[RMDB]
RNA sequence: GGGAACGACUCGAGUAGAGUCGAAAAGAUAUGGAGUAAGCGGUUGUACUUUCUUAGCAAGGCGUGUGUUCGGAAACGAACACCCGCUGAUGACCUAAGAGAAGUACAACCGCUUACUCCUAAGUCACCAUCUAAUAGUGUUCGCACUAUUAGAUGGAAAAGAAACAACAACAACAAC
Reactivity to DMS in 0.01 (KOAc 150mM, MgCl2 10mM, bicine 150mM(pH8.5), 24C), signal-to-noise 4, nucleotides 027 to 126: g000a050u010a300u010g000g000a030g030u010a010a000g000c010g010g010u000u000g010u000a000c010u000u000u000c000u010u000a010g010c040a070a130g000g020c000g010u000g010u000g010u010u000c000g010g010a140a100a260c000g020a010a010c000a000c010c060c010g030c000u000g000a050u000g010a110c300c000u000a010a020g010a030g000a020a010g010u000a000c000a000a010c020c010g000c000u000u000a000c000u000c000c000u000a000a050g020u000c050a300